[RMDB]
Source information: Chemical mapping of a 177-nucleotide RNA with DMS. The RNA was probed in 150 mM KOAc, 10 mM MgCl2 and 150 mM bicine (pH 8.5) at 24 C. Source: RMDB library TTRDEL, as collected in RNAgym. In probing experiments dimethyl sulfate is read out at A N1 and C N3, which are open when not base-paired.

RNA sequence: GGGAACGACUCGAGUAGAGUCGAAAAGAUAUGGAUACUCAUUUGAGAAUCCAUCGGAAACGAUGGUAUUCGAGAGUGAUCCUAAGUCAAAGAUGGCCUCAGUGUGUUCGCACACUGAGGCCAUCAAUCAGUGUGCAGAGUUCGCUCUGCACACUGAAAAAGAAACAACAACAACAAC
Reactivity to DMS in 0.01 (KOAc 150mM, MgCl2 10mM, bicine 150mM(pH8.5), 24C), signal-to-noise 1, nucleotides 027 to 126: g000a080u000a300u000g000g000a030u000a060c030u000c000a200u000u010u030g010a300g000a050a000u000c030c000a000u000c000g000g000a130a070a180c000g020a010u000g000g000u000a010u010u000c000g000a300g010a000g000u000g040a040u000c000c000u000a030a170g000u000c020a040a140a140g010a010u000g000g000c000c000u000c010a000g000u000g000u000g010u010u000c250g010c020a000c000a000c000u000g000a010g010g000c000c000a000u000c000a040a070